RNA sequence: GGGAACGACUCGAGUAGAGUCGAAAACGGAUACGCUGGACCGGCAGGCGUUGGGUGAAUUGUCGGCGACUACACACCUAGGUACUGUCACGCGGCAUGGAAGCGCCGGGGACAGGGCCCGCAGUGGGCACGUAAGCAACUUCGGUUGCUUACGUGCAAAAGAAACAACAACAACAAC
Reactivity to 2A3 in 0.01 (KOAc 150mM, MgCl2 10mM, bicine 150mM(pH8.5), 24C), signal-to-noise 2, nucleotides 027 to 126: c090g060g080a090u090a120c000g020c010u050g050g000a010c020c000g000g040c020a050g030g000c000g030u020u150g140g030g070u110g100a160a140u010u020g020u020c020g040g110c030g010a010c030u160a000c160a000c000a040c020c000u020a000g010g050u070a040c000u030g020u010c060a110c230g160c010g040g000c000a080u220g090g140a070a000g100c030g000c090c000g000g020g010g000a000c020a060g000g020g020c000c020c000g000c020a010g020u060g020g050